[RMDB]
RNA sequence: GGGAACGACUCGAGUAGAGUCGAAAAGAUAUGGAUCCGACCAGGCAACAGCUGGUUGGUCGGAAACGACCACCAGACAUGCCUGCAAGGAUCCUAAGUCAAAGCUAAUCGCUUCGGCGAUUAGCAACAACUUGUUGAUGUUCGCAUCAACAAGUUGAAAAGAAACAACAACAACAAC
Reactivity to DMS in 0.01 (KOAc 150mM, MgCl2 10mM, bicine 150mM(pH8.5), 24C), signal-to-noise 5, nucleotides 027 to 126: g000a050u000a300u000g000g010a020u000c000c000g010a300c300c010a000g010g010c000a050a080c260a230g010c000u000g000g000u010u000g050g010u010c000g000g000a040a030a110c000g010a020c000c010a020c010c000a010g000a020c130a280u000g010c000c000u000g000c030a040a300g020g000a000u000c000c000u000a010a070g000u010c060a120a110a180g020c000u010a000a000u000c010g020c000u000u000c280g030g000c010g000a000u000u010a000g000c010a060a080

The record gives the reactivity of an RNA of 177 nucleotides to DMS.
The DMS profile rests on 4,452 reads.